This 177-nucleotide RNA was probed chemically with DMS and 2A3. It was measured as part of the RMDB library OK1LIB. For 2A3, 456 sequencing reads were counted.

[RMDB]
RNA sequence: GGGAACGACUCGAGUAGAGUCGAAAAAAAAGGGGAAUUUCGUCAGCAGCCAGGCUUGACAGAUCAAUGUGUUUCACGUGUCAAUGGAGAUUUCGCAUAUGUUUGUAGCUGUGUGACCACAGAGUCGAAACCGCCAGUAAUUCGUUACUGGCGGUUUAAAAGAAACAACAACAACAAC
Reactivity to DMS in 0.01 (KOAc 150mM, MgCl2 10mM, bicine 150mM(pH8.5), 24C), signal-to-noise 2, nucleotides 027 to 126: a000a000a000a000g020g000g000g010a120a050u000u020u010c050g000u000c000a060g010c040a120g000c040c040a080g040g020c070u000u010g000a060c080a100g020a070u030c060a050a030u040g020u010g020u010u020u000c030a090c150g000u000g000u020c060a050a100u020g000g000a120g010a060u040u030u010c050g000c040a070u040a040u020g000u020u020u000g030u000a060g030c050u000g010u010g000u010g000a070c020c000a050c100a050g000a070g040u000c070g000
Reactivity to 2A3 in 0.01 (KOAc 150mM, MgCl2 10mM, bicine 150mM(pH8.5), 24C), signal-to-noise 1, nucleotides 027 to 126: a000a000a000a000g050g000g000g000a060a080u060u120u080c090g000u030c070a010g000c000a000g010c050c050a130g000g000c010u010u020g000a000c000a010g010a070u050c030a060a020u030g000u000g050u020u020u130c060a060c070g090u100g060u020c150a150a070u140g060g000a090g030a090u010u070u160c000g000c040a000u110a030u250g150u030u150u140g090u060a000g000c000u000g000u000g070u020g020a070c000c010a020c030a000g040a070g040u030c000g060